[RMDB]
RNA sequence: GGGAACGACUCGAGUAGAGUCGAAAACAAAGCGAGGCGUCAGUCAGGAGGCCGGUCAGGCCAGCCUCCGGAAGAUAAUCAGAGAAUAUUUGCGAUUGAUUUGGCCAGCUGGUCUUCGAGAACAGGCGUUGCGUAUACUCUUCGGAGUAUACGCAACAAAAGAAACAACAACAACAAC
Reactivity to 2A3 in 0.01 (KOAc 150mM, MgCl2 10mM, bicine 150mM(pH8.5), 24C), signal-to-noise 2, nucleotides 027 to 126: c000a000a140a010g170c070g030a050g010g080c000g030u030c040a010g020u000c000a020g000g020a070g010g000c070c140g000g030u140c120a150g010g110c000c000a000g000c000c000u000c020c000g050g040a050a000g030a040u110a140a070u150c090a000g100a060g150a300a040u070a120u150u090u160g090c000g040a010u000u060g030a040u140u060u070g020g030c000c000a000g020c010u010g000g010u000c000u020u010c050g140a190g040a110a000c030a060g080g050c040
Reactivity to DMS in 0.01 (KOAc 150mM, MgCl2 10mM, bicine 150mM(pH8.5), 24C), signal-to-noise 2, nucleotides 027 to 126: c040a050a110a150g000c070g000a080g040g010c010g010u000c010a050g020u020c040a150g020g010a000g000g030c020c030g020g000u000c080a140g020g020c000c020a030g020c050c020u000c000c000g000g000a140a060g000a080u000a040a050u000c090a110g000a150g010a120a110u000a050u000u000u000g000c110g000a060u010u010g020a080u000u000u010g010g000c030c050a240g000c020u000g010g010u000c010u000u010c050g000a090g010a090a050c060a050g010g000c120
Chemical mapping of a 177-nucleotide RNA with 2A3 and DMS. The reactions ran in a buffer of 150 mM KOAc, 10 mM MgCl2 and 150 mM bicine (pH 8.5), at 24 C. For DMS the reverse transcriptase was MarathonRT.